[RMDB]
RNA sequence: GGGAACGACUCGAGUAGAGUCGAAAAUAUGUAUUGAUUACUGAGAAUUUAACCGUUGACGUUCCUGUAAACAACACGCAAGAAAACGUAACAAUAAAUGCGGUUAAAGGUUUCGCACAGUUUGCAAAAAGAAGGAAGGGUUCGCCCUUCCUUCUUUAAAAGAAACAACAACAACAAC
Reactivity to DMS in 0.01 (KOAc 150mM, MgCl2 10mM, bicine 150mM(pH8.5), 24C), signal-to-noise 2, nucleotides 027 to 126: u050a080u010g010u000a030u020u020g000a100u010u000a040c040u010g000a190g000a220a170u000u000u000a010a030c010c020g020u010u000g040a110c010g020u000u020c050c010u000g000u010a050a070a090c190a040a100c190a110c170g000c040a030a070g000a080a040a050a060c080g000u010a070a050c130a040a090u000a080a080a120u010g010c000g030g000u000u020a000a040a000g000g010u010u000u000c050g020c220a170c140a090g000u000u010u000g030c070a060a090